An RNA of 177 nucleotides, treated with DMS and 2A3 and read out base by base. The 2A3 profile rests on 8,954 reads. It was measured as part of the RMDB library OK2TST. The reactions ran in a buffer of 150 mM KOAc, 10 mM MgCl2 and 150 mM bicine (pH 8.5), at 24 C.
[RMDB]
RNA sequence: GGGAACGACUCGAGUAGAGUCGAAAAGUGCUCAAAGUAACCCGUAUUUUUCGUUUUGAUAUAUGUAUUAGAUGUUGGCACAGAAGGCGUAAAACUGGUGCUUAGUAAUGUUUUGCUUACGGAGAGGUACUAAUAGGUAUUUCGAUACCUAUUAGUAAAAAGAAACAACAACAACAAC
Reactivity to DMS in 0.01 (KOAc 150mM, MgCl2 10mM, bicine 150mM(pH8.5), 24C), signal-to-noise 9, nucleotides 027 to 126: g010u000g010c020u010c050a070a140a140g010u000a080a090c060c040c020g010u010a030u010u010u000u000u000c030g010u000u010u000u010g000a060u000a060u000a050u000g010u000a070u000u000a070g010a080u010g010u000u000g010g010c030a030c040a090g010a090a080g000g010c070g010u000a040a040a070a070c050u000g010g020u000g010c040u000u000a060g010u000a050a060u000g000u000u000u000u000g010c070u000u000a050c070g000g010a210g010a060g000g010
Reactivity to 2A3 in 0.01 (KOAc 150mM, MgCl2 10mM, bicine 150mM(pH8.5), 24C), signal-to-noise 6, nucleotides 027 to 126: g040u040g020c020u030c080a080a050a020g030u040a090a080c000c020c020g030u040a180u040u070u010u010u060c030g010u050u050u100u140g050a010u030a020u020a010u170g060u080a090u100u070a070g030a090u110g050u190u090g030g000c030a000c000a030g090a050a020g060g030c060g020u090a040a040a020a030c020u020g050g010u030g020c010u010u020a010g010u050a050a090u100g060u040u070u080u110g020c000u020u020a010c020g040g000a050g010a010g060g030